[RMDB]
RNA sequence: GGGAACGACUCGAGUAGAGUCGAAAAUACGGGAGUUCGAACGUGGCCUGCAAUGUGAUCUGUCCCGGUGUCGUGUUCACCGAGUACACCUCUCGGGAGGAGCGGGAACGCUGGCGAAAGGUCCCAGGCUUGACCAUGAAUUCGUUCAUGGUCAAGCAAAAGAAACAACAACAACAAC
Reactivity to 2A3 in 0.01 (KOAc 150mM, MgCl2 10mM, bicine 150mM(pH8.5), 24C), signal-to-noise 2, nucleotides 027 to 126: u240a100c050g000g000g010a080g070u020u080c020g030a040a000c000g070u000g090g010c010c000u010g000c050a060a160u210g070u170g110a050u040c010u060g200u080c050c000c000g010g020u060g010u020c200g050u030g020u060u050c040a050c170c080g010a030g010u040a040c020a060c040c020u060c030u070c030g050g050g020a120g040g030a030g000c040g000g000g000a060a040c000g000c070u020g000g010c050g020a030a030a020g040g070u040c030c000c000a020g080
Reactivity to DMS in 0.01 (KOAc 150mM, MgCl2 10mM, bicine 150mM(pH8.5), 24C), signal-to-noise 3, nucleotides 027 to 126: u000a100c110g000g000g020a100g030u010u010c050g000a060a090c070g010u000g020g010c040c000u010g000c100a060a140u010g020u010g000a080u000c020u000g010u000c010c010c010g020g010u010g040u000c060g010u030g020u020u000c030a150c050c080g000a070g020u010a080c200a050c180c080u000c010u000c050g050g010g020a300g020g010a090g000c010g000g000g000a110a030c040g000c030u000g020g000c080g030a030a050a030g000g000u000c020c030c020a120g000

An RNA of 177 nucleotides, treated with 2A3 and DMS and read out base by base.
The 2A3 profile rests on 1,871 reads.
Reactivities are rounded to 0.1 and cut off at 0 and 3.
Source: RMDB library OK2TST, as collected in RNAgym.
The DMS profile rests on 1,900 reads.
2A3 adducts were read by reverse transcription with SuperScript II with manganese.